[RMDB]
RNA sequence: GGGAACGACUCGAGUAGAGUCGAAAAAGUUAUGAGUUCGCUCAUAACUACAGCGAAAGGCGCUCGGACCCGCAGUCCGCCGAAGGCAUCCCAGCCUCUCCAAGUUGGUAUAUUUCGAUAUACCAAAGAAGUCUUACGUUUUCGAACGUAAGACUUCAAAAGAAACAACAACAACAAC
Reactivity to 2A3 in 0.01 (KOAc 150mM, MgCl2 10mM, bicine 150mM(pH8.5), 24C), signal-to-noise 1, nucleotides 027 to 126: a000g000u000u000a000u010g000a000g040u060u080c170g050c040u030c000a000u010a020a000c010u030a030c030a020g050c030g120a180a060a060g120g030c030g000c070u050c040g080g030a070c000c000c080g060c090a010g030u020c010c010g000c000c020g090a020a010g020g020c020a020u010c000c000c000a000g010c000c010u020c000u000c030c020a180a030g070u020u030g000g000u000a000u000a000u010u080u040c040g020a010u030a000u010a010c000c000a030a000a000
Reactivity to DMS in 0.01 (KOAc 150mM, MgCl2 10mM, bicine 150mM(pH8.5), 24C), signal-to-noise 1, nucleotides 027 to 126: a020g010u010u010a000u020g000a010g000u000u010c220g030c000u000c000a000u010a000a000c000u000a050c170a120g020c040g000a070a070a160g020g000c010g030c120u000c030g000g000a160c040c100c050g000c090a110g000u010c080c020g010c060c040g000a060a060g010g030c010a070u000c040c010c000a150g000c010c020u000c060u000c040c030a070a110g000u000u000g010g010u010a000u010a020u000u010u020c210g020a020u000a010u000a030c000c000a000a020a050